[RMDB]
RNA sequence: GGGAACGACUCGAGUAGAGUCGAAAACUCGCUCAAACAUACAGAGAUGUUGUGCGAGAUGAAUCUCUCUGCAUUAGAAUGGUCGAAGAAUCAGCGGCAAUUCGAGACCUAAUUAGAAGCCGCAUUAACAGCUUUGGAACACGCCUUGCUGACGUGACAUAAUGACUGCGUUCGCGCAGUCAUUAUGAAAAGAAACAACAACAACAAC
Reactivity to 2A3 in 0.01 (KOAc 150mM, MgCl2 10mM, bicine 150mM(pH8.5), 24C), signal-to-noise 4, nucleotides 027 to 156: c020u020c000g000c000u040c040a140a060a030c010a010u140a030c090a110g120a010g030a110u020g000u000u010g010u000g010c010g000a010g000a020u090g060a060a100u030c000u000c010u040c050u100g070c080a160u080u140a110g120a300a120u170g010g000u000c000g010a070a010g000a010a050u040c070a050g000c000g030g000c000a000a030u030u000c020g000a000g000a030c000c000u060a070a050u060u070a000g060a180a010g010c000c000g020c010a000u050u070a080a030c020a010g060c020u130u190u220g050g000a040a030c020a000c040g030c010c000u020u020g000c040u020g020a040c040g040u040g000a010
Reactivity to DMS in 0.01 (KOAc 150mM, MgCl2 10mM, bicine 150mM(pH8.5), 24C), signal-to-noise 2, nucleotides 027 to 156: c020u000c000g040c010u000c000a080a040a060c020a050u010a300c030a150g000a140g020a030u000g000u000u000g020u000g010c030g010a050g000a080u040g010a090a100u000c100u010c000u020c040u010g020c050a110u020u010a110g000a050a160u000g030g040u000c010g010a160a230g040a090a090u020c030a180g020c050g020g000c000a070a090u010u000c040g020a300g000a080c000c020u000a050a060u000u010a190g000a090a180g020c000c010g000c040a200u010u000a020a100c050a000g000c020u000u000u000g000g020a110a130c000a080c050g020c020c050u000u010g020c120u000g000a080c030g010u000g000a190

Annotation: The data come from the RNA Mapping Database (RMDB), library OK3TST. This 207-nucleotide RNA was probed chemically with 2A3 and DMS. The reactions ran in a buffer of 150 mM KOAc, 10 mM MgCl2 and 150 mM bicine (pH 8.5), at 24 C. Reactivities are rounded to 0.1 and cut off at 0 and 3. For DMS, 2,755 sequencing reads were counted. DMS adducts were read by reverse transcription with MarathonRT. 2A3 adducts were read by reverse transcription with SuperScript II with manganese.